Chemical mapping of a 177-nucleotide RNA with DMS.
For DMS, 495 sequencing reads were counted.
The reactions ran in a buffer of 150 mM KOAc, 10 mM MgCl2 and 150 mM bicine (pH 8.5), at 24 C.
DMS adducts were read by reverse transcription with MarathonRT.
RNA sequence: GGGAACGACUCGAGUAGAGUCGAAAACAAACGAAAUCAGCACGCCGACGACCCCCACCGUCAUGCUCACCUGAGCGCCCACCAAAGUGCGUGAAAACAGGUCGCGCCCAAGCUGGUCGGUGCCAAAUAAAUCGCGAUAGUUCGCUAUCGCGAUUUAAAAAGAAACAACAACAACAAC
Reactivity to DMS in 0.01 (KOAc 150mM, MgCl2 10mM, bicine 150mM(pH8.5), 24C), signal-to-noise 1, nucleotides 027 to 126: c060a130a080a190c070g020a090a030a110u000c070a070g000c010a120c070g000c060c140g000a070c100g000a160c090c040c010c060c020a080c070c150g000u000c020a070u000g010c030u000c170a130c130c010u080g030a150g020c000g030c020c020c020a100c100c110a060a050a050g020u020g030c000g020u000g030a000a010a130a070c140a060g030g040u000c010g030c050g000c000c000c030a060a020g020c110u000g000g040u000c190g000g000u000g000c000c020a070a040a150